This 177-nucleotide RNA was probed chemically with 2A3 and DMS. For DMS, 2,032 sequencing reads were counted. For DMS the reverse transcriptase was MarathonRT. The 2A3 profile rests on 4,784 reads.
RNA sequence: GGGAACGACUCGAGUAGAGUCGAAAAGAUAUGGAGCGCCAUCGGAGCGAAGAACUAGCUCGGAAACGAGCUAGGGAGCUCCAUGGACGCUCCUAAGUCAAAACUCCGCCUGUUCGCAGGCGGAGAAGGAUCGUAUUUAGUUCGCUAAAUACGAUCCAAAAGAAACAACAACAACAAC
Reactivity to 2A3 in 0.01 (KOAc 150mM, MgCl2 10mM, bicine 150mM(pH8.5), 24C), signal-to-noise 2, nucleotides 027 to 126: g010a000u080a040u240g000g000a020g010c010g000c000c010a030u090c240g020g000a000g030c000g250a300a030g000a040a000c000u000a000g000c010u010c000g010g010a090a090a010c010g000a000g000c010u000a000g020g020g000a010g000c000u000c010c000a000u000g000g020a000c000g000c000u000c000c000u000a000a010g000u000c020a010a020a100a200c010u000c000c000g000c000c000u060g020u060u080c300g010c180a000g000g000c030g000g000a000g000a010a010
Reactivity to DMS in 0.01 (KOAc 150mM, MgCl2 10mM, bicine 150mM(pH8.5), 24C), signal-to-noise 2, nucleotides 027 to 126: g030a040u020a300u030g010g000a020g000c020g020c000c010a010u020c290g050g000a000g040c030g000a100a150g000a120a160c010u000a020g010c000u000c000g000g000a150a130a200c010g020a010g020c000u000a000g010g000g000a080g030c000u000c000c000a010u000g010g000a150c010g000c010u000c000c000u000a000a050g020u000c030a100a130a130a140c000u000c000c000g000c020c010u000g000u020u010c280g010c000a010g000g020c000g000g000a000g000a020a050